The data come from the RNA Mapping Database (RMDB), library 15KLIB. An RNA of 170 nucleotides, treated with 2A3 and DMS and read out base by base. DMS adducts were read by reverse transcription with MarathonRT. For 2A3, 21,171 sequencing reads were counted. For 2A3 the reverse transcriptase was SuperScript II with manganese.
[RMDB]
RNA sequence: GGGAACGACUCGAGUAGAGUCGAAAAGCGCCGGCUGGGCAACAUUCCGAGGGGACCGUCCCUCGGUAAUGGCGAAUGGGACCCAGAACUCUCUCUAGAUUCCCAGAGUGAAUCGAGAGAAAACUGGAUACACGACAGUUCGCUGUCGUGAAAAGAAACAACAACAACAAC
Reactivity to 2A3 in 0.01 (KOAc 150mM, MgCl2 10mM, bicine 150mM(pH8.5), 24C), signal-to-noise 7, nucleotides 027 to 129: g050c060g030c010c000g030g050c020u020g010g010g010c020a050a010c010a060u020u010c010c000g020a010g020g020g010g040a140c040c050g300u280c010c000c000u020c010g000g000u020a010a030u020g000g000c050g060a070a040u100g020g030g030a060c010c000c000a000g000a040a040c000u000c000u000c000u000c010u060a050g000a020u010u020c000c030c110a050g040a020g080u300g020a010a020u010c010g000a000g000a000g000a040a020a000a010c000u030g000g000a020u060a110
Reactivity to DMS in 0.01 (KOAc 150mM, MgCl2 10mM, bicine 150mM(pH8.5), 24C), signal-to-noise 8, nucleotides 027 to 129: g010c090g050c030c020g020g020c020u010g040g000g000c100a090a070c010a030u000u040c030c020g020a020g030g010g010g020a110c190c290g070u070c010c010c020u000c010g020g020u000a010a040u030g000g000c070g030a080a080u040g030g040g010a060c090c000c010a010g010a110a150c170u000c030u010c000u000c000u000a140g000a020u030u010c010c020c200a160g010a130g000u040g000a040a010u000c000g000a030g000a020g010a010a010a050a130c000u030g000g010a120u000a120